RNA sequence: GGGAACGACUCGAGUAGAGUCGAAAAGACAGAUAUCGAACUGGAGAAAACGGUGAAGGCUCGACCUUACGCAAAAUCUCGCGACAAGCAUUGCCGAGCAACCACACGCCAUCGUGCGCGAUAAUCAGUAGUCAGUCAGGUUCGCCUGACUGACUACAAAAGAAACAACAACAACAAC
Reactivity to 2A3 in 0.01 (KOAc 150mM, MgCl2 10mM, bicine 150mM(pH8.5), 24C), signal-to-noise 2, nucleotides 027 to 126: g060a030c040a000g060a080u080a070u080c010g030a050a110c050u060g060g030a060g070a050a060a040a010c050g020g080u100g060a030a020g090g000c010u000c030g030a100c010c040u010u050a030c010g010c030a040a090a060a210u100c110u030c050g040c000g070a110c050a060a010g000c050a130u030u110g030c040c000g000a000g030c020a010a010c030c060a000c010a010c060g000c000c010a140u160c110g060u110g030c060g090c040g020a010u030a060a120u050c060a010
Reactivity to DMS in 0.01 (KOAc 150mM, MgCl2 10mM, bicine 150mM(pH8.5), 24C), signal-to-noise 1, nucleotides 027 to 126: g000a120c040a120g010a110u000a030u040c010g040a090a060c040u000g000g030a040g000a070a030a090a060c060g000g010u000g000a080a060g050g020c020u000c090g000a080c000c080u000u010a050c050g030c120a070a090a060a110u020c100u010c120g010c140g040a050c060a040a210g000c040a120u000u000g000c000c000g010a000g020c130a010a130c060c000a020c050a060c010g000c020c020a070u000c150g000u020g020c090g020c010g030a050u000a000a040u000c060a100